[RMDB]
RNA sequence: GGGAACGACUCGAGUAGAGUCGAAAAAGAGGCGAUACGUCGCCUCAAGCUUGGUGCUUAGCUUCUUUCACCAAGCAUAUUACACGCGGAUAACUGCCAAAGGAGAAACACUGACUACGGUCAGUGAGGAAGUUGGUUCGGUUCGCCGAACCAACAAGGUAAGACCAAACUUCGGUUUGGUCUUACCAAAAGAAACAACAACAACAAC
Reactivity to 2A3 in 0.01 (KOAc 150mM, MgCl2 10mM, bicine 150mM(pH8.5), 24C), signal-to-noise 1, nucleotides 027 to 156: a000g000a000g020g000c030g000a020u030a010c150g080u000c010g000c000c000u000c000a000a000g000c020u000u000g020g000u000g000c080u020u000a030g040c010u030u110c000u080u060u030c000a000c000c000a000a000g000c000a020u030a010u080u130a040c050a000c000g080c010g000g000a050u080a260a250c020u130g030c040c070a050a000a000g020g000a000g000a060a080a000c000a000c000u000g010a000c000u010a010c080g040g000u000c000a000g010u010g000a020g020g030a120a110g000u000u030g000g000u000u000c000g010g000u040u040c190g010c100c000g010a000a000c000c000a000a000c000a000a000
An RNA of 207 nucleotides, treated with 2A3 and read out base by base.
For 2A3, 780 sequencing reads were counted.
2A3 adducts were read by reverse transcription with SuperScript II with manganese.
The RNA was probed in 150 mM KOAc, 10 mM MgCl2 and 150 mM bicine (pH 8.5) at 24 C.